[RMDB]
RNA sequence: GGGAACGACUCGAGUAGAGUCGAAAACCCACCAAGUUCUUAUCAAGAGAAGCAGAGGGACUGGCUCGACGAAGCUUCAGCAACCGGUGUAAUGGCGAAAGCCAUGACCAAGGUGCUAAAUCCAGCAAGCUCGAACAGCUUGGAAGAUAAGAACAGACAUCCUACUACUAUUCGUAGUAGUAGGAUGAAAAGAAACAACAACAACAAC
Reactivity to DMS in 0.01 (KOAc 150mM, MgCl2 10mM, bicine 150mM(pH8.5), 24C), signal-to-noise 4, nucleotides 027 to 156: c010c000c010a140c090c050a050a180g010u000u000c000u000u000a050u000c030a100a170g000a300g000a070a030g030c030a070g030a300g030g000g000a120c030u000g020g040c020u010c050g010a130c060g020a150a120g010c060u000u000c060a100g020c010a050a060c030c020g000g090u010g020u000a040a020u000g010g020c000g020a140a110a270g020c000c000a000u000g010a060c020c040a160a110g000g010u000g010c000u010a060a100a040u000c020c010a060g030c010a040a020g000c000u000c050g020a100a150c130a220g010c010u000u000g000g010a190a160g000a030u000a020a040g000a030a030c020a150g010a190
Reactivity to 2A3 in 0.01 (KOAc 150mM, MgCl2 10mM, bicine 150mM(pH8.5), 24C), signal-to-noise 9, nucleotides 027 to 156: c010c000c000a010c030c040a150a050g000u000u000c000u000u000a010u010c040a130a050g060a020g010a170a000g000c020a010g020a040g040g010g010a040c010u020g020g000c010u040c020g150a190c020g020a080a010g010c010u030u030c030a000g000c010a030a080c010c010g000g000u060g110u210a090a050u000g000g000c010g040a070a020a000g000c000c000a000u010g010a000c010c010a040a100g000g000u000g000c000u020a020a030a080u030c010c000a000g040c020a090a000g010c010u060c100g110a140a070c040a060g000c000u000u020g030g020a010a000g000a000u000a000a000g000a000a000c000a000g020a010